[RMDB]
RNA sequence: GGGAACGACUCGAGUAGAGUCGAAAACGGCAUUUCCCCAGCAGCCAUGACCUACCAGGCUGCGGUGCGGCUCGCCGCACAGGUCCUCCCUCAUCGGGCGCGUCCUGCGUCCUUCCACGCCAACCCAAGACCAUUGCUUCCUUCGGGAAGCAAUGAAGAUUAGGAUACUGUUCGCAGUAUCCUAAUCAAAAGAAACAACAACAACAAC
Reactivity to 2A3 in 0.01 (KOAc 150mM, MgCl2 10mM, bicine 150mM(pH8.5), 24C), signal-to-noise 4, nucleotides 027 to 156: c040g030g010c030a060u040u040u080c010c000c010c010a020g020c010a000g000c010c010a150u140g020a050c000c040u090a180c130c080a020g000g000c000u010g000c000g010g000u010g000c000g000g000c060u150c170g110c020c000g000c000a000c010a020g010g020u010c000c030u030c010c010c010u080c020a090u110c050g000g000g000c010g000c010g040u200c020c080u110g010c000g000u010c000c020u040u030c030c010a070c070g020c010c020a050a060c020c020c030a030a000g050a050c040c000a010u000u000g000c000u000u000c000c000u010u030c030g070g000g000a000a000g010c010a000a000u000g000a010a000
Reactivity to DMS in 0.01 (KOAc 150mM, MgCl2 10mM, bicine 150mM(pH8.5), 24C), signal-to-noise 1, nucleotides 027 to 156: c000g000g030c020a200u000u000u000c000c000c020c010a080g060c020a000g030c000c020a160u000g020a140c060c060u010a090c080c070a150g020g020c010u010g010c030g030g000u020g030c000g020g060c000u000c220g000c010c020g000c020a090c000a040g000g000u010c040c070u000c000c010c010u010c100a080u000c150g030g020g030c000g000c020g030u000c060c030u000g000c020g000u010c000c010u000u000c030c040a090c070g040c020c010a080a120c020c010c000a110a140g000a120c150c010a000u010u000g010c000u000u000c000c010u000u010c260g040g000g000a000a020g020c000a000a000u000g000a050a110
An RNA of 207 nucleotides, treated with 2A3 and DMS and read out base by base.
For DMS the reverse transcriptase was MarathonRT.
The 2A3 profile rests on 5,189 reads.